[RMDB]
RNA sequence: GGGAACGACUCGAGUAGAGUCGAAAAUUUGUUUAGUUUUGCUAGCACUCUUUGUUACCUCCACCUUUUUCUUGGCCUUUUCAGCCUCAAGCUCUGCGGCUAGCUUUUCAAUCCGGUUGUUGCAUUCCGCAAUUUGCACAGACCUUUCUACCCGCGCAGCGUCGAUUAUAUUCGUAUAAUCGACGCUAAAAGAAACAACAACAACAAC
Reactivity to DMS in 0.01 (KOAc 150mM, MgCl2 10mM, bicine 150mM(pH8.5), 24C), signal-to-noise 2, nucleotides 027 to 156: u010u010u000g000u000u000u000a100g030u000u000u000u000g020c030u000a090g030c030a100c050u000c040u020u000u020g010u010u000a080c040c010u000c020c020a070c040c010u000u000u000u000u000c040u020u000g040g020c010c020u000u010u000u020c070a070g030c020c020u010c060a050a130g000c000u000c000u000g020c060g040g050c040u000a060g010c030u000u000u000u000c050a060a160u010c010c030g020g020u010u000g010u000u000g000c000a150u000u000c040c010g030c050a120a130u000u010u010g040c030a060c060a080g000a020c010c030u000u010u010c050u010a090c010c010c010g040c090g030c130
Reactivity to 2A3 in 0.01 (KOAc 150mM, MgCl2 10mM, bicine 150mM(pH8.5), 24C), signal-to-noise 2, nucleotides 027 to 156: u100u070u050g030u010u080u080a100g050u000u080u050u090g030c030u020a030g020c010a030c070u060c000u090u060u090g040u110u050a060c030c040u020c020c040a010c020c030u050u120u040u110u080c030u040u090g040g040c010c050u150u140u070u040c060a000g040c000c020u040c050a030a040g000c030u010c050u090g020c030g000g000c050u000a010g040c000u070u020u070u130c070a050a040u060c090c080g010g010u010u010g060u100u010g020c020a030u040u170c040c010g020c030a090a090u030u030u110g000c000a010c000a050g070a090c020c000u020u060u110c060u050a110c000c020c000g040c050g030c070
Notes: An RNA of 207 nucleotides, treated with DMS and 2A3 and read out base by base. The reactions ran in a buffer of 150 mM KOAc, 10 mM MgCl2 and 150 mM bicine (pH 8.5), at 24 C. For 2A3, 942 sequencing reads were counted. In probing experiments dimethyl sulfate is read out at A N1 and C N3, which are open when not base-paired.